[RMDB]
RNA sequence: GGGAACGACUCGAGUAGAGUCGAAAACUGGGUCUGCUAGCCGGGCAUUAUCGUGCUGACAGGUUUUGGAGUUCGCAGCUGCUAGACGAUGCUAUCGCCCGGUUGCAUCGCUGGCGCACCGCUGCCACUCAGGCUAUCAGUUCGCUGAUAGCCUGAGAAAAGAAACAACAACAACAAC
Reactivity to DMS in 0.01 (KOAc 150mM, MgCl2 10mM, bicine 150mM(pH8.5), 24C), signal-to-noise 2, nucleotides 027 to 126: c030u000g000g010g020u000c030u000g020c030u010a040g010c010c000g030g030g020c010a170u010u010a050u000c180g000u010g010c000u010g000a040c070a270g000g010u030u000u010u010g020g000a100g010u000u000c170g000c020a010g020c010u010g000c010u010a060g010a100c010g010a010u000g010c060u000a040u010c250g020c030c050c070g000g000u010u000g010c000a020u000c020g000c020u000g000g000c060g000c170a110c220c100g000c010u000g000c000c300a130
Reactivity to 2A3 in 0.01 (KOAc 150mM, MgCl2 10mM, bicine 150mM(pH8.5), 24C), signal-to-noise 1, nucleotides 027 to 126: c010u060g100g180g000u030c020u020g040c050u060a010g040c020c000g010g040g030c040a020u160u220a150u300c130g120u190g050c000u020g000a030c020a060g050g000u030u040u000u130g120g040a070g030u090u130c050g010c030a000g000c010u040g000c000u030a020g040a170c000g000a000u000g040c020u030a030u140c050g000c010c000c000g040g000u000u020g020c000a010u000c000g000c030u000g010g000c020g000c040a060c020c100g040c050u000g020c000c000a020